[RMDB]
Structure probing data (DMS and 2A3) for a 177-nucleotide construct. For 2A3 the reverse transcriptase was SuperScript II with manganese. Conditions: 150 mM KOAc, 10 mM MgCl2 and 150 mM bicine (pH 8.5), 24 C. For DMS the reverse transcriptase was MarathonRT. For DMS, 2,344 sequencing reads were counted. The 2A3 profile rests on 588 reads.
RNA sequence: GGGAACGACUCGAGUAGAGUCGAAAAGUCGUUUACGUGAAAAGAUUGAAGAUGAUCCGUCACAUCCUGAAUAUAUUGUGACGCGUAGAGGCGUUGGAUAUUUCCUCCAACAACAUGAGUAGAGGUCAUAUCCCGGAGAGUUCGCUCUCCGGGAUAUAAAAGAAACAACAACAACAAC
Reactivity to DMS in 0.01 (KOAc 150mM, MgCl2 10mM, bicine 150mM(pH8.5), 24C), signal-to-noise 2, nucleotides 027 to 126: g030u000c050g000u030u010u000a010c030g000u040g000a050a080a060a060g000a010u000u010g000a120a130g060a090u000g010a020u000c000c000g000u000c000a000c000a000u000c220c130u020g000a130a090u050a150u040a070u060u000g000u000g000a000c060g000c010g060u020a010g000a040g000g020c030g000u020u020g010g010a120u020a150u000u000u000c030c010u000c010c020a030a130c030a090a050c200a130u030g000a100g020u020a100g000a060g000g000u030c060
Reactivity to 2A3 in 0.01 (KOAc 150mM, MgCl2 10mM, bicine 150mM(pH8.5), 24C), signal-to-noise 2, nucleotides 027 to 126: g060u080c180g050u000u000u040a080c000g000u090g130a050a050a010a160g000a010u090u150g110a060a130g090a300u300g000a000u040c000c000g000u000c020a040c010a020u090c020c000u100g090a300a030u270a080u060a050u190u120g000u000g040a000c000g000c000g000u000a000g010a000g100g000c000g000u060u000g110g000a040u060a160u300u130u000c010c000u010c000c000a020a030c000a000a000c080a140u160g040a070g010u180a000g000a060g000g010u040c020